Notes:
Chemical mapping of a 177-nucleotide RNA with 2A3 and DMS. For DMS, 13,193 sequencing reads were counted. For 2A3 the reverse transcriptase was SuperScript II with manganese.
[RMDB]
RNA sequence: GGGAACGACUCGAGUAGAGUCGAAAAAUGGACUUGCAGACUGACAGGAGCUCAUCUCGGUGCAGCCCCUUGCCCAGCUGCCAGCGUUCUGCGGCAGCUGCCCCCCCCGGCAGUGUAGCGCGGCGGGCAGGAACGUUAUAUUCGUAUAACGUUCCUGAAAAGAAACAACAACAACAAC
Reactivity to 2A3 in 0.01 (KOAc 150mM, MgCl2 10mM, bicine 150mM(pH8.5), 24C), signal-to-noise 3, nucleotides 027 to 126: a000u070g020g030a020c030u040u100g020c040a010g020a150c040u080g010a050c040a040g060g040a040g060c020u020c030a070u020c020u020c060g080g020u060g010c020a030g010c030c010c020c000u030u110g020c050c010c010a000g010c000u000g020c000c020a120g000c020g130u300u140c080u210g000c000g020g000c010a010g000c010u000g020c000c000c000c010c000c000c000c010g000g000c010a020g030u050g020u130a020g030c030g000c000g070g000c020g000g000g040
Reactivity to DMS in 0.01 (KOAc 150mM, MgCl2 10mM, bicine 150mM(pH8.5), 24C), signal-to-noise 5, nucleotides 027 to 126: a080u000g000g000a060c040u000u000g010c050a070g010a090c100u000g010a090c090a070g010g000a070g010c050u010c050a060u010c030u000c110g000g020u000g010c100a060g000c020c010c010c050u000u000g020c090c090c010a030g010c000u000g000c000c010a070g050c020g010u000u010c140u020g030c020g000g000c010a010g010c010u000g000c010c000c000c010c010c000c000c010g000g000c040a040g010u000g010u010a070g010c050g000c030g000g010c030g000g010g010